Background:
The data come from the RNA Mapping Database (RMDB), library OK3TST. An RNA of 207 nucleotides, treated with 2A3 and read out base by base. Reactivities are given for positions 27 through 156. 2A3 is a SHAPE reagent: it acylates the 2'-hydroxyl of flexible nucleotides of all four kinds. Values are in units of 0.01, from 0 to 300, in steps of 10.

RNA sequence: GGGAACGACUCGAGUAGAGUCGAAAAAUAUGUUUUUUGUCCUUCAUUCUGUGGGCAUUUUUGUUUAUUGAUGUUUUCAAUUGAAUGUGUUUUAUAAUGUCAAGUACAUCAAAUUUAGAACAGAAAGAAAAAUUUUACAGUAUCUUAUGCUUGGAUAACAAAUAUCAUGCUUCGGCAUGAUAUUUGUAAAAGAAACAACAACAACAAC
Reactivity to 2A3 in 0.01 (KOAc 150mM, MgCl2 10mM, bicine 150mM(pH8.5), 24C), signal-to-noise 1, nucleotides 027 to 156: a010u150a050u020g040u030u000u000u000u020u030g000u000c000c000u000u000c000a040u070u100c050u090g060u030g040g000g040c070a020u010u000u000u000u080g070u000u130u070a130u030u070g040a020u020g000u000u000u050u020c010a020a030u060u010g020a080a090u080g020u000g000u020u060u030u130a200u020a150a080u110g140u110c060a020a050g000u000a020c000a000u010c000a020a050a140u030u100u090a010g020a000a010c000a000g090a080a070a040g060a040a060a050a040a080u120u270u030u090a020c000a020g070u120a030u130c090u150u130a040u090g040c050u080u070g030g030a030u150a050